[RMDB]
Structure probing data (2A3 and DMS) for a 177-nucleotide construct. The reactions ran in a buffer of 150 mM KOAc, 10 mM MgCl2 and 150 mM bicine (pH 8.5), at 24 C. It was measured as part of the RMDB libraries RFM100 and RFMREP. For DMS the reverse transcriptase was MarathonRT.

RNA sequence: GGGAACGACUCGAGUAGAGUCGAAAACUGGGAGGACAGACGAUCAGCCCUGGCUGUCCCUCAGGAGCGGGGGGCCUCCAAGGCACACUGCCCACUGGGUCAAGGAGUAUCCAGGAGGAGUUAGAAGAAGUGUCCCUUUUUUCGAAAAGGGACACUUAAAAGAAACAACAACAACAAC
Reactivity to 2A3 in 0.01 (KOAc 150mM, MgCl2 10mM, bicine 150mM(pH8.5), 24C), signal-to-noise 3, nucleotides 027 to 126: c040u020g000g010g020a230g040g020a020c000a000g040a030c020g050a140u090c090a020g040c000c010c000u000g020g020c000u000g000u000c020c000c000u000c030a050g060g010a030g010c050g010g010g000g000g000g000c030c000u020c000c030a050a060g050g000c050a020c000a000c060u120g010c010c000c010a080c010u040g010g000g030u020c060a110a060g100g010a090g020u090a030u040c010c000a010g000g010a070g050g020a050g050u110u190a080g030a110a010g060
Reactivity to DMS in 0.01 (KOAc 150mM, MgCl2 10mM, bicine 150mM(pH8.5), 24C), signal-to-noise 3, nucleotides 027 to 126: c010u000g010g000g000a160g000g010a030c010a070g020a100c100g000a090u010c140a040g000c050c070c010u010g000g000c010u010g010u000c010c000c000u000c010a050g010g010a110g000c120g000g000g000g000g000g000c050c000u000c060c070a160a160g010g000c150a040c130a030c050u000g020c000c020c040a090c060u010g000g000g020u000c030a170a110g060g000a140g020u020a050u010c060c010a070g020g010a110g010g000a110g000u010u000a050g010a090a080g020